[RMDB]
RNA sequence: GGGAACGACUCGAGUAGAGUCGAAAAUAUCAAUAAUGAAAGGGAUUUUCAAUCAACCAUGCUAGAGGAAAGAUGGUAUUCUCUUCUGUUCUCUGUAGAAAAGGCAAUAAAAAUCAGUGCCACAUAACAAGGUUAUCAGAGGAUGUAGCAUAGAGGACGGAUAUAUAAUCUUCGGAUUAUAUAUCCGAAAAGAAACAACAACAACAAC
Reactivity to 2A3 in 0.01 (KOAc 150mM, MgCl2 10mM, bicine 150mM(pH8.5), 24C), signal-to-noise 5, nucleotides 027 to 156: u110a010u050c020a020a080u140a140a070u120g050a080a030a050g050g010g030a040u060u070u090u180c090a070a060u060c020a020a050c020c010a020u090g050c050u090a080g020a040g120g090a090a050a020g020a030u020g010g030u030a090u080u030c030u000c000u080u000c010u010g000u030u000c010u000c000u000g040u060a040g080a040a090a040a020g010g000c020a030a030u120a220a130a050a020a000u140c070a030g080u010g060c020c000a040c000a040u130a070a010c040a060a020g120g020u090u080a040u130c000a000g000a010g040g000a010u030g070u120a030g010c050a050u030a060g030a020g010g020a000
Reactivity to DMS in 0.01 (KOAc 150mM, MgCl2 10mM, bicine 150mM(pH8.5), 24C), signal-to-noise 2, nucleotides 027 to 156: u010a110u000c020a110a160u000a160a100u000g000a070a080a060g000g010g010a090u000u000u000u000c080a080a140u000c020a070a150c000c020a070u000g010c020u000a090g000a100g010g000a050a050a090g010a070u000g000g010u000a100u000u000c040u010c000u000u000c020u000g010u000u000c020u000c000u000g010u010a100g030a030a080a070a060g020g000c060a050a160u020a010a040a050a080a090u010c070a150g040u010g000c010c050a080c080a080u010a080a040c060a050a080g000g020u000u000a080u000c020a060g000a130g000g020a050u000g020u010a030g000c040a070u000a100g000a100g010g030a150